[RMDB]
RNA sequence: GGGAACGACUCGAGUAGAGUCGAAAAAUGCAGUCAUCUCUCCUUCAGCAACAUAUGGAGUUGCUCGAAUCCUCCAUGAUCCCUCUCAUGCAUCCCUUAGCAGACCCAUCUACAGUCUUUAGAGGAGCUCGUAAGGAUGUUUCGACAUCCUUACGAGAAAAGAAACAACAACAACAAC
Reactivity to DMS in 0.01 (KOAc 150mM, MgCl2 10mM, bicine 150mM(pH8.5), 24C), signal-to-noise 2, nucleotides 027 to 126: a090u010g000c050a070g020u010c020a080u000c010u020c030u000c000c060u000u000c040a080g010c040a070a050c070a100u000a140u000g020g010a110g020u010u010g010c010u010c090g000a100a110u000c070c020u010c040c030a080u000g000a040u000c030c000c000u000c040u000c060a060u000g020c110a090u010c020c010c020u000u000a120g020c090a060g000a110c010c010c030a070u000c060u030a070c090a060g010u010c030u000u000u000a080g010a020g000g010a130g000
Reactivity to 2A3 in 0.01 (KOAc 150mM, MgCl2 10mM, bicine 150mM(pH8.5), 24C), signal-to-noise 1, nucleotides 027 to 126: a000u110g000c000a010g050u030c030a050u070c020u000c000u000c060c000u060u050c000a010g040c000a010a030c040a090u300a120u240g150g040a120g020u030u020g030c020u030c020g080a020a000u060c030c040u050c040c000a050u040g060a060u050c010c040c000u000c020u000c000a030u030g020c030a080u050c000c000c030u060u050a010g110c020a010g000a090c040c020c000a000u000c000u070a060c010a070g110u050c000u080u090u090a020g020a010g120g080a090g050